RNA sequence: GGGAACGACUCGAGUAGAGUCGAAAAAUGCGUGUAAGACCUGCCCGAAGCAAUGAAGGCCGAGGAGUCGGUACGGGAGUGUGUAGGGCAGGCUCGCAAAAAACCAUAUGUUCUUCGGAACAUAUGGGCGUAUUGAGAGGUUCGCCUCUCAAUACGCAAAAGAAACAACAACAACAAC
Reactivity to DMS in 0.01 (KOAc 150mM, MgCl2 10mM, bicine 150mM(pH8.5), 24C), signal-to-noise 1, nucleotides 027 to 126: a040u000g020c020g020u000g080u010a020a030g030a160c000c000u000g030c000c000c000g020a220a300g000c000a020a000u020g030a300a170g010g000c030c020g000a040g040g090a230g000u000c000g070g000u000a070c010g000g000g000a300g010u000g050u000g010u000a300g000g000g060c000a010g010g000c000u010c010g000c010a010a000a060a020a030a030c030c000a010u010a010u000g000u000u000c000u000u000c100g020g000a050a000c000a000u000a000u000g000g000
Reactivity to 2A3 in 0.01 (KOAc 150mM, MgCl2 10mM, bicine 150mM(pH8.5), 24C), signal-to-noise 1, nucleotides 027 to 126: a000u050g000c050g000u260g000u060a030a000g140a120c000c000u000g000c000c000c000g000a110a010g040c000a010a010u090g010a060a030g040g000c020c010g000a050g120g060a170g290u070c020g050g000u150a300c010g010g040g000a140g030u040g000u080g020u060a050g020g000g000c000a010g000g000c000u020c000g000c000a000a000a150a000a000a000c000c000a000u000a000u000g010u000u000c020u010u030c180g160g020a000a000c010a000u000a000u010g000g000